[RMDB]
RNA sequence: GGGAACGACUCGAGUAGAGUCGAAAAACCAAGUCUGGGGGCCGAUGAGGGUUAGCUCAAAGUAGGGUUUUGACUUGAAAACUCAAGCUGUGACCCCAAAACGAUGGAGGUAAAUGAGAAUCCUCCUAAAACUAUGGACACUUCGGUGUCCAUAGAACAACAACUUAAUGUUCGCAUUAAGUUGUUGAAAAGAAACAACAACAACAAC
Reactivity to 2A3 in 0.01 (KOAc 150mM, MgCl2 10mM, bicine 150mM(pH8.5), 24C), signal-to-noise 5, nucleotides 027 to 156: a000c010c000a020a000g100u040c060u060g020g010g000g000g010c010c020g030a040u060g020a060g030g040g020u040u080a010g010c030u020c040a070a080a020g060u080a130g060g040g020u040u030u040u060g070a100c010u030u090g070a060a050a090a100c030u010c030a020a020g010c030u050g050u100g130a090c000c010c000c000a010a060a040a010c070g030a060u120g000g000a000g000g010u080a110a150a130u220g020a060g040a070a050u050c000c010u000c010c000u010a010a030a010a000c000u000a000u000g000g000a000c000a000c010u050u050c210g060g000u010g000u000c000c000a000u000a000g000a000a000
Reactivity to DMS in 0.01 (KOAc 150mM, MgCl2 10mM, bicine 150mM(pH8.5), 24C), signal-to-noise 3, nucleotides 027 to 156: a160c020c010a090a190g010u000c060u000g030g010g000g020g040c080c020g010a120u010g010a130g000g030g010u000u000a030g010c030u010c050a080a060a110g000u010a140g010g020g020u010u010u000u010g010a080c050u000u020g010a050a070a100a080c120u000c020a050a130g030c030u010g020u000g010a070c000c000c000c040a020a050a050a060c100g020a130u000g010g020a040g040g010u010a040a070a100u000g010a170g000a250a170u000c010c000u000c000c010u010a030a050a040a160c000u010a010u000g000g000a050c000a010c000u000u000c260g040g010u020g000u000c000c000a000u000a000g010a020a140

The record gives the reactivity of an RNA of 207 nucleotides to 2A3 and DMS. DMS (dimethyl sulfate) methylates the pairing face of unpaired adenines and cytosines. Values cover nucleotides 27 to 156. Source: RMDB library M2RFPK, as collected in RNAgym. The RNA was probed in 150 mM KOAc, 10 mM MgCl2 and 150 mM bicine (pH 8.5) at 24 C.